[RMDB]
RNA sequence: GGGAACGACUCGAGUAGAGUCGAAAACUUUACAAGUGAACCACCCGUAACAUAUUCACCAGCUACAAUUUUAGCUGGUAGUGUCUACACUAAUAGCUGCCUUGUAUCGUCUGAUGGACAACCUGGCUUGUCUUGCGGUUCGCCGCAAGAAAAAGAAACAACAACAACAAC
Reactivity to DMS in 0.01 (KOAc 150mM, MgCl2 10mM, bicine 150mM(pH8.5), 24C), signal-to-noise 6, nucleotides 027 to 129: c030u020u020u080a070c090a070a050g040u000g030a050a060c050c060a060c100c000c150g040u010a010a020c070a000u020a110u070u040c080a050c040c010a010g000c000u000a010c300a170a100u020u030u020u000a020g010c010u010g000g000u050a050g010u010g000u010c120u000a060c030a090c100u050a040a030u000a000g030c090u000g000c070c000u030u020g030u000a000u030c060g020u020c040u000g000a120u080g040g010a050c060a090a030c030c030u000g010g010c120u010u000g020
Reactivity to 2A3 in 0.01 (KOAc 150mM, MgCl2 10mM, bicine 150mM(pH8.5), 24C), signal-to-noise 8, nucleotides 027 to 129: c010u070u080u130a040c050a050a020g000u020g030a030a010c030c000a060c010c040c000g030u040a060a020c020a060u090a200u130u120c070a020c010c000a000g010c010u030a030c080a300a300u130u140u100u050a020g000c000u010g010g000u010a000g010u000g000u010c070u070a040c040a020c060u110a100a060u050a160g060c030u060g020c010c000u050u040g040u040a120u070c030g040u000c040u050g140a100u190g050g020a010c000a000a000c000c000u010g000g000c000u010u040g020
The record gives the reactivity of an RNA of 170 nucleotides to DMS and 2A3. Reactivities are given for positions 27 through 129. The DMS profile rests on 24,058 reads. Reactivities are rounded to 0.1 and cut off at 0 and 3. The RNA was probed in 150 mM KOAc, 10 mM MgCl2 and 150 mM bicine (pH 8.5) at 24 C.